Description
The record gives the reactivity of an RNA of 177 nucleotides to DMS.

RNA sequence: GGGAACGACUCGAGUAGAGUCGAAAAGAUAUGGACGUGGAAUUGGCUAGCUCCGUGCCAGAGUGCUAUCGGAAACGAUAGGACUCGGUAAUACGGAGAACUACUAGCCAAUUCCACGUCCUAAGUCCGUCAGACAAGUGUUCGCACUUGUCUGACGAAAAGAAACAACAACAACAAC
Reactivity to DMS in 0.01 (KOAc 150mM, MgCl2 10mM, bicine 150mM(pH8.5), 24C), signal-to-noise 1, nucleotides 027 to 126: g010a060u020a300u000g000g000a020c000g070u010g000g000a010a020u000u000g000g010c000u000a000g020c010u000c010c010g060u000g020c020c010a140g010a020g000u000g000c020u000a010u000c000g000g000a170a100a300c000g000a010u000a020g000g020a010c000u000c000g000g000u000a050a090u000a300c010g020g010a020g020a060a030c080u020a300c050u010a030g000c010c010a000a010u000u000c000c000a000c000g010u000c000c020u000a010a160g000u010c060
DMS adducts were read by reverse transcription with MarathonRT. The reactions ran in a buffer of 150 mM KOAc, 10 mM MgCl2 and 150 mM bicine (pH 8.5), at 24 C.